An RNA of 207 nucleotides, treated with 2A3 and read out base by base. 2A3 adducts were read by reverse transcription with SuperScript II with manganese. The RNA was probed in 150 mM KOAc, 10 mM MgCl2 and 150 mM bicine (pH 8.5) at 24 C. Values are in units of 0.01, from 0 to 300, in steps of 10. The data come from the RNA Mapping Database (RMDB), library M2RFPK. The 2A3 profile rests on 550 reads.

RNA sequence: GGGAACGACUCGAGUAGAGUCGAAAACAAUCAACAAUAUGGUAUGUGUAGUUAUGCUGAAAAUCGUUGAGGUUGUAUGGAAUAGGUUAACCGUAAGACCUUAAGUUGAAAAACUUUAAAAUUAAUCAAAAUCAUGUACACUUCGGUGUACAUGAAACGACGAAUACAGGUUCGCCUGUAUUCGUCGAAAAGAAACAACAACAACAAC
Reactivity to 2A3 in 0.01 (KOAc 150mM, MgCl2 10mM, bicine 150mM(pH8.5), 24C), signal-to-noise 2, nucleotides 027 to 156: c060a010a100u170c020a000a060c020a040a010u120a090u300g010g010u060a060u120g040u030g010u030a070g010u050u060a040u090g050c010u060g060a040a040a020a110u090c060g020u020u020g030a060g030g060u060u030g000u040a240u080g040g020a050a120u020a070g020g030u070u050a040a080c030c060g000u050a080a030g010a050c000c010u020u020a010a000g000u000u000g010a020a020a020a020a020c010u020u160u220a000a120a030a060u190u180a080a010u160c010a000a060a060a120u020c000a000u010g000u000a010c000a000c020u000u070c150g100g010u000g000u000a000c010a000u020g000a000a010a000